Background
Structure probing data (DMS and 2A3) for a 207-nucleotide construct. For DMS the reverse transcriptase was MarathonRT. For 2A3, 3,384 sequencing reads were counted.
RNA sequence: GGGAACGACUCGAGUAGAGUCGAAAACGUAUUGGAGCACGUAGUGUAUCUCUAGAUGAGGCUACUAGAAUUGCACGAGCAAUUAAUGCCGUUACAGUUCAAGAGUAUGCAUCUGCCUUUAAUGAUGCUUUUAAUGCUAUUGAUUUAUUAAUGAUUGUGAUAAUGUUUCGUUCGCGAAACAUUAUCAAAAAGAAACAACAACAACAAC
Reactivity to DMS in 0.01 (KOAc 150mM, MgCl2 10mM, bicine 150mM(pH8.5), 24C), signal-to-noise 4, nucleotides 027 to 156: c040g020u000a090u000u000g010g010a080g030c030a060c050g010u020a110g010u010g010u010a020u000c020u000c050u000a070g010a100u000g010a060g020g030c010u000a090c060u000a170g010a040a020u000u000g020c060a050c100g030a220g020c000a060a160u000u000a110a210u000g010c010c010g020u010u000a030c030a070g020u010u000c020a100a160g000a060g000u010a030u000g000c000a020u000c000u000g020c090c050u000u000u010a060a070u010g000a060u000g030c000u000u010u000u000a060a110u000g030c000u000a080u000u000g000a180u000u000u000a070u010u010a040a090u010g010a210u000u000g010
Reactivity to 2A3 in 0.01 (KOAc 150mM, MgCl2 10mM, bicine 150mM(pH8.5), 24C), signal-to-noise 6, nucleotides 027 to 156: c020g050u060a050u050u110g070g010a050g020c020a000c040g030u050a020g020u030g040u080a100u030c040u000c040u050a070g000a120u090g040a030g030g020c020u050a040c040u020a110g080a050a020u020u000g000c050a030c130g070a100g040c010a010a030u090u100a170a060u170g010c000c000g000u020u090a080c020a070g020u020u040c030a090a000g020a040g080u070a030u090g000c010a010u040c030u030g040c020c020u080u130u110a100a110u170g090a040u020g000c000u050u050u070u170a080a060u070g000c020u040a060u150u070g050a050u030u150u240a090u160u210a120a080u180g050a080u020u230g010